[RMDB]
RNA sequence: GGGAACGACUCGAGUAGAGUCGAAAACUUGCACUGUUGUCCUACACAUUCUCGUUGUCGCGGCAGAUCUUCGAUGUGAGGGGGAGGCGCAGUGAGCUGACACUACCAGUAGUGCCAUAGGUGCGAGCGCGCUUGCCUCCUUCGGGAGGCGAGCGCGAAAAGAAACAACAACAACAAC
Reactivity to 2A3 in 0.01 (KOAc 150mM, MgCl2 10mM, bicine 150mM(pH8.5), 24C), signal-to-noise 1, nucleotides 027 to 126: c000u010u000g000c000a000c070u040g020u080u060g030u090c010c000u090a010c000a020c010a050u180u070c020u080c070g160u100u020g060u060c080g030c000g120g000c020a020g040a210u040c050u140u060c070g200a230u070g120u120g060a010g060g000g000g080g040a010g010g000c030g000c070a070g010u000g140a010g000c000u030g100a010c000a060c040u090a040c040c010a060g010u090a000g050u020g000c090c000a150u080a040g130g000u070g010c000g010a020g040

The record gives the reactivity of an RNA of 177 nucleotides to 2A3.
The data come from the RNA Mapping Database (RMDB), library OK1LIB.
The 2A3 profile rests on 461 reads.
The reactions ran in a buffer of 150 mM KOAc, 10 mM MgCl2 and 150 mM bicine (pH 8.5), at 24 C.